Structure probing data (2A3 and DMS) for a 177-nucleotide construct. It was measured as part of the RMDB library OK1LIB. For DMS the reverse transcriptase was MarathonRT.
RNA sequence: GGGAACGACUCGAGUAGAGUCGAAAAGAAAGGCAGCGAAGCUGUCGAGCGCGAGACCAAGAUGCUGAAACCGGCCUAAAAGCAUCGGUCGAGUCGUUAGAGGCCGGAAUAGCGACGAGCGCGAAAAGGGAAUAACCUACUUCGGUAGGUUAUUCCCAAAAGAAACAACAACAACAAC
Reactivity to 2A3 in 0.01 (KOAc 150mM, MgCl2 10mM, bicine 150mM(pH8.5), 24C), signal-to-noise 1, nucleotides 027 to 126: g160a010a060a000g010g030c040a040g000c190g160a170a000g020c070u000g030u000c000g000a040g010c010g000c040g000a080g000a020c010c000a110a060g040a050u040g000c000u060g000a020a090a090c000c000g010g010c010c000u050a120a130a000a000g000c000a020u040c010g000g000u010c000g000a020g000u000c000g000u000u000a030g010a010g070g000c000c000g000g040a010a040u150a030g030c000g000a000c030g000a010g010c000g000c000g050a070a010a000a050
Reactivity to DMS in 0.01 (KOAc 150mM, MgCl2 10mM, bicine 150mM(pH8.5), 24C), signal-to-noise 2, nucleotides 027 to 126: g020a180a060a300g000g030c000a000g020c000g050a010a150g000c000u000g000u000c000g000a070g020c010g000c010g000a260g020a030c030c060a140a040g030a050u010g000c000u000g010a040a230a220c020c030g000g010c050c020u010a030a060a140a060g000c010a090u010c030g000g000u000c080g000a060g000u020c000g000u000u000a070g010a140g010g000c000c000g000g020a180a000u020a060g000c030g000a050c050g000a110g000c040g000c010g030a020a030a140a100